[RMDB]
RNA sequence: GGGAACGACUCGAGUAGAGUCGAAAACAAUCUGGAGUUAUGAAUUCAGGUGAUGAAUAUGGUCAGGGAAUUAUUUCUAAACCAGCAUCCGCUAUUGCGAAAGCAGCAGGGAUGCUUAAAAGUAUACCGCUUAUUCGACCUUAUGCAAGAGCUACAGGAGGUUCCUGAAAUUCGUUUCAGGAACCUCAAAAGAAACAACAACAACAAC
Reactivity to 2A3 in 0.01 (KOAc 150mM, MgCl2 10mM, bicine 150mM(pH8.5), 24C), signal-to-noise 1, nucleotides 027 to 156: c000a000a130u060c000u010g010g000a000g000u110u090a040u010g080a060a030u030u060c010a010g050g030u120g080a300u160g030a010a010u050a050u110g050g100u170c120a100g020g070g010a090a130u100u060a080u040u150u010c080u070a160a130a070c030c030a010g000c000a000u000c000c030g000c300u080a080u150u000g000c010g020a090a040a000g000c030a010g000c000a000g050g030g010a000u000g000c000u000u000a000a000a000a000g020u010a000u080a130c000c000g000c010u030u090a050u040u010c040g010a010c010c010u000u000a000u080g000c010a000a000g020a000g050c010u080a040c040a060g130